[RMDB]
This 207-nucleotide RNA was probed chemically with 2A3 and DMS. For 2A3, 735 sequencing reads were counted. Source: RMDB library OK3TST, as collected in RNAgym. The reactions ran in a buffer of 150 mM KOAc, 10 mM MgCl2 and 150 mM bicine (pH 8.5), at 24 C.

RNA sequence: GGGAACGACUCGAGUAGAGUCGAAAACUCACACUGCAUAUAUUAUUCAGGGUUGUAUUGACAAUGGAGUCCCCUUCCCAUGCAGUAAGGAAACCACAUACAACCAGAGGAAACAACGAUUAGAAAACCCCUAGGAAGAAUGACAUCAGCAAAAUGAUAAUUACCAUCGUUUCGACGAUGGUAAUUAAAAAGAAACAACAACAACAAC
Reactivity to 2A3 in 0.01 (KOAc 150mM, MgCl2 10mM, bicine 150mM(pH8.5), 24C), signal-to-noise 2, nucleotides 027 to 156: c010u050c020a000c010a010c010u010g010c040a000u090a020u030a090u240u090a130u180u210c090a090g080g000g000u060u000g010u040a080u060u090g040a030c110a130a110u160g070g080a040g060u120c000c010c030c000u040u010c000c020c000a000u060g000c010a010g010u110a080a030g050g000a020a050a040c010c010a040c040a040u010a010c020a080a020c000c000a000g040a000g120g080a130a030a000c030a050a020c080g080a090u150u270a120g010a030a080a020a010c000c000c050c000u000a030g000g050a040a080g010a070a010u120g010a010c010a060u060c020a060g030c040a050a090a020a000u290g080a070
Reactivity to DMS in 0.01 (KOAc 150mM, MgCl2 10mM, bicine 150mM(pH8.5), 24C), signal-to-noise 1, nucleotides 027 to 156: c050u000c030a080c070a190c020u000g000c020a120u010a170u000a050u050u020a070u000u000c060a120g030g020g020u000u010g020u000a010u000u000g000a060c070a050a090u010g000g000a130g000u000c010c020c000c040u000u000c040c010c020a080u000g000c010a060g010u000a040a080g000g010a120a040a070c050c010a080c080a050u000a020c000a080a080c000c010a190g000a100g020g000a120a090a090c020a040a130c040g020a120u020u000a160g000a130a100a160a140c030c010c050c040u000a050g000g050a080a220g000a070a080u000g000a050c000a090u000c030a090g020c010a060a030a120a100u000g030a150